[RMDB]
RNA sequence: GGGAACGACUCGAGUAGAGUCGAAAACCUGAUAAAGUUCCCUGCGCAGUUCCUGUACUUCGUUGUUAUCCCAAGCAGGAUCAAACAUCCCUCCGAGAUCUUCACGGUAACGCCCGUGCCGAUCUCACAGUCUGUACAUUUUCGAAUGUACAGACUGAAAAGAAACAACAACAACAAC
Reactivity to 2A3 in 0.01 (KOAc 150mM, MgCl2 10mM, bicine 150mM(pH8.5), 24C), signal-to-noise 7, nucleotides 027 to 126: c000c000u040g090a160u150a180a160a020g030u040u040c010c000c000u010g020c040g000c010a020g010u030u020c000c020u040g030u080a070c020u050u080c040g050u050u110g090u090u060a080u100c000c000c010a020a020g020c030a020g030g020a040u060c070a010a110a020c030a050u040c010c020c020u050c060c080g010a010g000a020u010c000u010u010c010a000c000g010g020u080a200a030c130g040c020c000c000g000u000g000c010c000g010a010u000c000u000c000a010
Reactivity to DMS in 0.01 (KOAc 150mM, MgCl2 10mM, bicine 150mM(pH8.5), 24C), signal-to-noise 4, nucleotides 027 to 126: c020c020u020g000a120u020a040a090a130g010u010u000c030c000c000u000g000c050g030c030a050g000u000u000c030c010u010g000u000a070c070u010u000c040g010u000u000g000u000u000a150u000c000c020c010a080a150g010c110a040g000g000a070u030c070a060a070a150c140a150u000c010c000c030u000c150c150g000a010g000a020u000c000u000u000c020a010c000g010g010u010a120a120c300g000c240c010c000g010u010g010c120c100g000a000u000c000u010c020a240